[RMDB]
RNA sequence: GGGAACGACUCGAGUAGAGUCGAAAACUCUAUUAUUGGUGGACUAGCAAUAAAGUACUUUGCAAGUACAUGCAACACUUCAAACUUCUAUGUAAUUAGUGCAUUAUUGUUCAACCCCAUGAAUAAUUGUUACGGUCAGUUUCGACUGACCGUAACAAAAAGAAACAACAACAACAAC
Reactivity to 2A3 in 0.01 (KOAc 150mM, MgCl2 10mM, bicine 150mM(pH8.5), 24C), signal-to-noise 3, nucleotides 027 to 126: c010u000c030u030a080u190u020a040u020u000g060g020u110g010g030a070c100u040a000g010c000a000a000u020a000a010a070g030u020a020c010u010u000u010g060c060a030a070g070u030a060c010a020u080g030c020a130a070c040a090c170u160u100c100a230a260a130c080u080u000c070u230a280u200g040u120a060a090u070u040a040g000u000g000c000a040u040u030a000u000u000g010u020u090c040a090a130c000c000c000c000a000u040g110a040a010u050a050a070u010